[RMDB]
Source information: Source: RMDB library OK3TST, as collected in RNAgym. Chemical mapping of a 207-nucleotide RNA with 2A3. The 2A3 profile rests on 498 reads.
RNA sequence: GGGAACGACUCGAGUAGAGUCGAAAAUGUUUAAUCUCUGACCUUUGGUUUGACAUGUAAAAAUGAUAAAUUUUAUCAUAGUGAUACAUUGUAACACAUGCCCAAGUAUCUCCAAAACUGACUUCAUCUUUUGUGAAAGUGAUGCCAACUGAACAUAGGAUCGGAUAAUGUUCGCAUUAUCCGAUCCAAAAGAAACAACAACAACAAC
Reactivity to 2A3 in 0.01 (KOAc 150mM, MgCl2 10mM, bicine 150mM(pH8.5), 24C), signal-to-noise 2, nucleotides 027 to 156: u050g020u000u090u090a080a060u050c020u000c020u050g130a140c010c020u010u020u090g020g040u000u020u100g030a000c020a020u030g040u080a000a090a070a150a000u000g040a010u030a050a230a300u220u300u150u000a050u000c010a000u040a110g170u070g020a000u010a020c000a070u020u110g030u070a060a000c000a000c010a180u100g000c020c020c000a000a000g000u000a050u020c010u010c040c010a020a020a070a090c050u040g010a020c000u040u000c050a110u000c000u040u130u070u100g080u070g090a100a070a040g070u050g080a010u060g000c080c020a060a000c060u100g030a030a010c030a020u190a140